[RMDB]
RNA sequence: GGGAACGACUCGAGUAGAGUCGAAAACAUUUUAACGCGUGUGCACUCUCUAACACGAAUUACCCAGUUAUUUUCGACUUUACUCGAGUCGUUAUAGCGUGCGUUGAGAGAGUUGGGCGCGAUUGAAAAACUAUGAUUUCUUCGGAAAUCAUAGUUUAAAAGAAACAACAACAACAAC
Reactivity to DMS in 0.01 (KOAc 150mM, MgCl2 10mM, bicine 150mM(pH8.5), 24C), signal-to-noise 3, nucleotides 027 to 126: c260a070u010u010u010u010a030a060c180g000c010g020u000g010u000g000c080a070c030u010c030u010c010u000a130a070c010a020c010g010a080a070u000u010a110c040c050c040a120g010u000u000a070u000u000u000u000c000g010a000c000u000u000u000a010c010u000c010g010a000g000u010c000g000u000u000a010u010a090g010c040g030u000g010c030g010u000u000g010a070g010a050g010a100g000u000u000g010g000g020c030g020c020g000a090u000u010g000a060a070